[RMDB]
RNA sequence: GGGAACGACUCGAGUAGAGUCGAAAACAAAACAAAAUAAUAGAGACGCACGCACUCAAUCAAAGAGCGCCUUGGCGAGCGCGCUCGUCGCGACGCAAAUGCGCAACAAAGACAAAACAAGACACAAGGGUGGUAUAUAGUUCGCUGUGUGCUGCCCAAAAGAAACAACAACAACAAC
Reactivity to 2A3 in 0.01 (KOAc 150mM, MgCl2 10mM, bicine 150mM(pH8.5), 24C), signal-to-noise 6, nucleotides 027 to 126: c030a010a070a000a000c040a010a090a030a040u180a030a040u050a030g060a000g000a020c000g010c000a010c020g020c000a030c020u020c010a000a060u030c030a060a010a030g060a010g010c000g010c000c000u000u010g040g000c010g010a100g080c010g010c000g020c020u130c090g150u160c010g000c010g010a020c010g000c020a010a030a010u050g000c010g010c010a000a050c020a030a090a000g100a000c020a010a060a010a000c040a000a050g120a030c010a000c010a060a030
Reactivity to DMS in 0.01 (KOAc 150mM, MgCl2 10mM, bicine 150mM(pH8.5), 24C), signal-to-noise 5, nucleotides 027 to 126: c060a040a050a090a110c080a080a060a080a060u030a080a080u020a100g000a060g020a090c050g000c050a010c050g010c010a080c020u000c050a010a090u050c110a090a090a060g000a150g020c030g010c020c090u000u000g000g030c000g000a090g000c050g010c010g010c000u040c170g000u040c020g000c020g000a030c000g010c020a040a010a010u000g000c000g010c000a070a070c160a030a070a070g010a060c110a030a050a060a010c100a070a050g000a080c120a020c130a110a070